[RMDB]
RNA sequence: GGGAACGACUCGAGUAGAGUCGAAAAGAUAUGGAAACUCGACUGCGAAGAACGUCCGUGUCGGAAACGACACGACGGGAGCAGGAGUUUCCUAAGUCAAACACAAGGAUGUUCGCAUCCUUGUGAACAUCUAAGGGGAGUUCGCUCCCCUUAGAUGAAAAGAAACAACAACAACAAC
Reactivity to 2A3 in 0.01 (KOAc 150mM, MgCl2 10mM, bicine 150mM(pH8.5), 24C), signal-to-noise 4, nucleotides 027 to 126: g000a010u020a000u060g000g010a000a010a000c000u050c080g300a300c140u050g020c010g300a300a280g060a300a040c010g030u040c180c070g000u080g010u010c010g000g000a020a010a010c000g010a000c000a000c000g000a000c000g000g000g020a090g010c010a000g000g030a000g000u000u000u010c000c000u000a000a000g000u000c040a200a060a070c010a000c010a010a000g020g010a010u020g050u140u160c300g030c130a000u020c000c000u000u020g000u000g000a010a020
Reactivity to DMS in 0.01 (KOAc 150mM, MgCl2 10mM, bicine 150mM(pH8.5), 24C), signal-to-noise 5, nucleotides 027 to 126: g010a020u000a060u010g000g000a010a020a010c000u000c020g020a300c020u000g010c000g030a150a170g010a160a300c010g010u010c080c190g040u000g000u000c010g000g000a010a010a030c000g000a020c000a010c000g010a000c000g010g020g000a050g040c000a000g000g000a020g000u000u000u000c000c000u000a000a080g000u010c010a150a130a300c020a000c000a000a010g000g000a020u010g010u010u020c280g010c010a000u000c010c010u010u000g010u000g010a090a130

Chemical mapping of a 177-nucleotide RNA with 2A3 and DMS. The reactions ran in a buffer of 150 mM KOAc, 10 mM MgCl2 and 150 mM bicine (pH 8.5), at 24 C. For 2A3 the reverse transcriptase was SuperScript II with manganese. For 2A3, 8,053 sequencing reads were counted. The data come from the RNA Mapping Database (RMDB), library TTRDES.